[RMDB]
RNA sequence: GGGAACGACUCGAGUAGAGUCGAAAAGAUAUGGAAGCGAGGAUCGCUUACAGGCAUGGUGUAAGGAGCGGUCGGAAACGACCGAACUACUCUUGAGCCAUGCCUGUAAGCGGGAGCUUCCUAAGUCGUUGCGUAUUUGGUUCGCCAAAUACGCAACAAAAGAAACAACAACAACAAC
Reactivity to DMS in 0.01 (KOAc 150mM, MgCl2 10mM, bicine 150mM(pH8.5), 24C), signal-to-noise 1, nucleotides 027 to 126: g010a180u000a300u000g000g010a000a010g090c010g000a050g110g000a010u000c040g030c020u000u000a000c000a040g000g000c000a020u020g000g080u000g010u010a300a090g000g000a020g000c010g000g030u060c000g020g000a070a120a190c000g030a000c000c010g000a020a010c040u020a300c010u000c000u010u000g000a300g030c010c000a000u000g030c040c000u010g010u000a010a020g020c000g000g000g000a020g010c000u010u000c000c000u000a030a050g050u040c070